RNA sequence: GGGAACGACUCGAGUAGAGUCGAAAACUCGUCUUUCGAGACGAGAAAAAAGGGGUCUGCGUUGAUCGAUGAGGAGCAUCGAUCCUGAAGCCUCCACGGGGGAGCUCCGAAUCGGGAGCAGACGGAGGCACCCAAAAAACGUAUCUUCGGAUACGAAAGAUGGUCUCAAGUUCGCUUGAGACCAUCUAAAAGAAACAACAACAACAAC
Reactivity to 2A3 in 0.01 (KOAc 150mM, MgCl2 10mM, bicine 150mM(pH8.5), 24C), signal-to-noise 1, nucleotides 027 to 156: c000u000c000g010u000c000u040u200u180c290g110a020g010a000c000g020a010g050a120a070a000a000a030a000g060g000g000g000u010c030u050g010c010g110u140u010g020a070u020c010g000a010u020g030a040g040g040a000g010c020a180u270c050g070a090u050c000c020u070g020a160a020g050c030c030u050c050c000a020c020g030g000g000g000g010a010g000c000u020c000c000g010a040a030u000c000g010g000g010a030g000c010a020g010a020c010g000g000a010g000g060c000a060c010c000c010a040a200a000a020a000a000c020g000u000a000u010c000u070u080c260g100g000a000u020a020c000g000a090a060
Chemical mapping of a 207-nucleotide RNA with 2A3. The RNA was probed in 150 mM KOAc, 10 mM MgCl2 and 150 mM bicine (pH 8.5) at 24 C. 2A3 adducts were read by reverse transcription with SuperScript II with manganese. The data come from the RNA Mapping Database (RMDB), library RNAMAK.